[RMDB]
RNA sequence: GGGAACGACUCGAGUAGAGUCGAAAACAAGUCACGUCUGAAAAGCGAAAGCCCUAAGAUAUGCAGCUGUGAAGACUUGACGCAGCGAGGCUCGCAGAACUUCGGUUCUGCAAAAGAAACAACAACAAAUUAAAUGCGGAUUCGUCCGCAUUUAAUUAAAAGAAACAACAACAACAAC
Reactivity to 2A3 in 0.01 (KOAc 150mM, MgCl2 10mM, bicine 150mM(pH8.5), 24C), signal-to-noise 2, nucleotides 027 to 126: c000a000a000g020u030c000a000c090g060u030c070u150g060a090a060a070a000g020c020g050a070a110a040g050c050c000c000u080a090a060g100a080u210a120u280g040c040a020g000c000u000g000u000g090a050a000g000a020c000u000u010g060a050c000g000c000a000g000c000g060a140g100g000c040u060c080g020c010a000g000a000a000c000u030u070c140g050g000u000u000c000u000g000c000a000a000a000a000g010a060a090a010c020a060a000c000a030a000c020a130
Reactivity to DMS in 0.01 (KOAc 150mM, MgCl2 10mM, bicine 150mM(pH8.5), 24C), signal-to-noise 2, nucleotides 027 to 126: c040a020a180g000u010c040a300c050g000u040c000u010g070a090a020a050a050g010c010g000a120a090a090g000c000c050c020u030a070a110g020a210u060a040u060g010c070a070g010c000u000g000u000g010a170a040g010a070c000u000u000g030a210c000g000c070a000g040c000g000a080g000g010c030u000c160g000c000a000g000a010a010c020u000u090c160g040g000u010u000c000u000g000c000a000a000a010a020g000a090a050a070c040a050a050c180a110a070c190a050

Notes:
Conditions: 150 mM KOAc, 10 mM MgCl2 and 150 mM bicine (pH 8.5), 24 C. The record gives the reactivity of an RNA of 177 nucleotides to 2A3 and DMS. For 2A3, 963 sequencing reads were counted. Reactivities are rounded to 0.1 and cut off at 0 and 3. For DMS the reverse transcriptase was MarathonRT.